[RMDB]
RNA sequence: GGGAACGACUCGAGUAGAGUCGAAAAAUGUGGACGCCGGGGCCAAUCAUAUUGUCGCUCAGGAUCGUGGCAUUGUGCUUAUCGGCCGUCGCGGUCGUAAUGAUAUCGGCACCCUCGACUGCCUGUUCCCUCCCUCGCGAUUCGUCGCGAGGGAGGGAAAAGAAACAACAACAACAAC
Reactivity to 2A3 in 0.01 (KOAc 150mM, MgCl2 10mM, bicine 150mM(pH8.5), 24C), signal-to-noise 1, nucleotides 027 to 126: a000u200g010u130g000g040a110c110g000c070c020g000g000g000g000c010c110a040a000u080c040a000u020a110u160u050g050u020c090g000c020u100c130a120g020g010a000u040c000g000u000g010g090c200a040u000u300g000u080g070c040u120u090a070u300c110g040g000c090c000g050u060c070g000c040g000g000u000c000g000u070a060a060u160g140a070u060a060u230c000g010g000c010a150c030c000c000u060c000g030a000c000u050g070c000c030u110g000u000u060